[RMDB]
Record summary: An RNA of 177 nucleotides, treated with 2A3 and DMS and read out base by base. High 2A3 reactivity points to a flexible backbone, as in loops and unpaired stretches. The reactions ran in a buffer of 150 mM KOAc, 10 mM MgCl2 and 150 mM bicine (pH 8.5), at 24 C.

RNA sequence: GGGAACGACUCGAGUAGAGUCGAAAAACGCGUCGUACGCGACGCGAAAGUGUACUUCCUGGGGCCUCUGGGCAUAUAAUUCCUGUGGCCUCUGGGUGUGUACCCUAGUAGCUAUACGUAGCUACAAACCUUCACUUACUUUCGAGUAAGUGAAGGUAAAAGAAACAACAACAACAAC
Reactivity to 2A3 in 0.01 (KOAc 150mM, MgCl2 10mM, bicine 150mM(pH8.5), 24C), signal-to-noise 8, nucleotides 027 to 126: a000c000g000c000g000u010c000g010u030a030c240g010c020g100a000c000g000c000g020a030a010a010g030u020g010u010a000c000u080u080c000c000u010g000g000g000g010c000c010u030c060u110g030g020g030c120a020u110a030u080a220a140u170u090c000c000u020g010u020g000g000c000c000u010c000u000g000g010g010u060g000u010g000u030a020c000c010c010u010a040g000u000a000g000c000u020a010u010a100c250g120u030a030g000c000u000a000c000a010a050
Reactivity to DMS in 0.01 (KOAc 150mM, MgCl2 10mM, bicine 150mM(pH8.5), 24C), signal-to-noise 4, nucleotides 027 to 126: a080c010g010c000g000u000c000g050u010a140c220g020c000g000a010c000g000c000g010a020a030a080g010u000g020u000a000c020u010u000c000c000u010g000g010g000g030c000c000u000c030u040g000g000g020c300a080u020a090u030a140a140u030u020c000c000u010g000u000g010g000c010c010u000c000u000g010g010g010u010g000u010g000u000a010c000c010c000u010a100g000u000a010g010c000u000a040u000a090c140g010u000a010g000c000u000a000c000a070a140